Chemical mapping of a 207-nucleotide RNA with 2A3. For 2A3, 525 sequencing reads were counted. The RNA was probed in 150 mM KOAc, 10 mM MgCl2 and 150 mM bicine (pH 8.5) at 24 C. For 2A3 the reverse transcriptase was SuperScript II with manganese.

RNA sequence: GGGAACGACUCGAGUAGAGUCGAAAAAGGUCAAUUACCAACAGCUGCAAUUAGCUUGACUGAUAAUAUUGCACAUGAAGUAGGUAGCGAUUUAAGAAAAGCGACAGUACAAGAACUAGCUGAUUUUGUAGCAAAUUACGCUAGCACUAUACAAGGCCCGCUACACUUAGUUCGCUAAGUGUAGCGGAAAAGAAACAACAACAACAAC
Reactivity to 2A3 in 0.01 (KOAc 150mM, MgCl2 10mM, bicine 150mM(pH8.5), 24C), signal-to-noise 2, nucleotides 027 to 156: a010g030g000u040c050a090a100u150u030a110c060c020a030a050c040a050g030c030u030g000c010a000a190u050u020a080g020c000u000u030g020a080c120u050g090a050u020a180a000u100a070u060u140g020c000a060c050a070u140g150a190a000g010u080a050g130g040u010a020g020c000g020a000u100u180u150a090a110g090a000a090a010a000g040c000g000a000c020a000g040u090a060c020a100a030g040a050a070c000u000a020g000c000u010g020a040u030u000u040u190g120u040a060g030c010a000a000a030u080u040a000c040g000c000u000a010g080c050a040c090u050a050u040a080c110a120a010g130g000c000